RNA sequence: GGGAACGACUCGAGUAGAGUCGAAAAGGUCAAUCGAUUUCGUGAUGGAUGCGCUUUCCAACGGCCGGCGCGUGAAGUGCCUGACCGUCGUCGACGAUUUCACGAAAGAGGCUGUCGACAUCGUCGACACUUUUAGCCACUUCGGUGGCUAAAAGUGAAAAGAAACAACAACAACAAC
Reactivity to DMS in 0.01 (KOAc 150mM, MgCl2 10mM, bicine 150mM(pH8.5), 24C), signal-to-noise 9, nucleotides 027 to 126: g010g010u000c050a130a080u000c080g010a160u000u000u000c010g020u000g010a040u010g000g010a110u000g000c050g010c130u000u000u000c070c050a100a040c010g010g010c010c090g010g010c010g020c010g010u010g010a100a180g010u000g000c010c010u010g010a020c020c010g000u000c100g010u010c030g000a020c030g000a140u010u000u000c000a010c010g000a020a040a040g000a160g010g000c100u000g010u000c030g010a050c110a070u000c120g000u000c010g010a050
Reactivity to 2A3 in 0.01 (KOAc 150mM, MgCl2 10mM, bicine 150mM(pH8.5), 24C), signal-to-noise 8, nucleotides 027 to 126: g050g040u080c030a040a080u090c060g100a070u030u040u020c030g020u030g010a030u070g050g080a060u120g090c070g010c080u090u090u040c040c020a030a010c010g000g000c000c000g010g000c000g000c010g000u100g190a200a050g010u010g010c010c020u140g070a300c010c000g020u050c040g060u080c010g020a050c010g010a040u030u030u030c020a010c010g020a020a030a020g080a030g040g020c080u080g050u050c020g010a030c020a160u110c070g020u000c010g000a010
Chemical mapping of a 177-nucleotide RNA with DMS and 2A3.
2A3 adducts were read by reverse transcription with SuperScript II with manganese.
The DMS profile rests on 30,304 reads.
For 2A3, 21,478 sequencing reads were counted.
Source: RMDB library OK2TRN, as collected in RNAgym.